[RMDB]
RNA sequence: GGGAACGACUCGAGUAGAGUCGAAAAGAAGCAGUUUUCACUUAUGUCGAUCCUGUCCGACUUGGUUUGGAUCUUCAAUUGGUGAUGGAAUUGGGCCAGUCGAAGAAUGGUGUUUUAGGAACAGUUAGUAGCAUUUAGUGUUCGCACUAAAUGCUACAAAAGAAACAACAACAACAAC
Reactivity to 2A3 in 0.01 (KOAc 150mM, MgCl2 10mM, bicine 150mM(pH8.5), 24C), signal-to-noise 1, nucleotides 027 to 126: g070a040a030g050c030a020g030u000u020u130u050c050a010c000u000u040a030u110g010u000c040g020a030u000c010c010u060g050u000c020c080g160a300c200u130u240g000g000u100u140u080g020g000a020u000c000u010u010c060a180a150u060u070g020g020u060g050a030u070g030g110a050a070u040u060g040g080g000c000c000a000g010u100c040g000a030a000g060a070a100u050g000g040u060g000u030u100u060u110a110g040g040a060a060c060a010g060u080u150a050
Reactivity to DMS in 0.01 (KOAc 150mM, MgCl2 10mM, bicine 150mM(pH8.5), 24C), signal-to-noise 3, nucleotides 027 to 126: g000a110a070g020c040a050g010u000u000u010u010c020a020c010u000u000a110u010g010u000c060g000a000u000c020c000u000g010u010c000c000g000a130c210u020u020g000g000u000u000u000g000g000a040u000c010u000u000c020a040a150u010u000g000g010u000g010a070u010g010g010a060a080u010u010g010g000g000c050c020a070g000u000c060g000a090a060g000a080a090u010g010g010u010g000u000u000u010u010a070g000g000a060a060c090a070g000u000u010a150

The data come from the RNA Mapping Database (RMDB), library OK2TRN. The record gives the reactivity of an RNA of 177 nucleotides to 2A3 and DMS. Reactivities are given for positions 27 through 126. The DMS profile rests on 4,024 reads. For 2A3, 1,150 sequencing reads were counted. For 2A3 the reverse transcriptase was SuperScript II with manganese.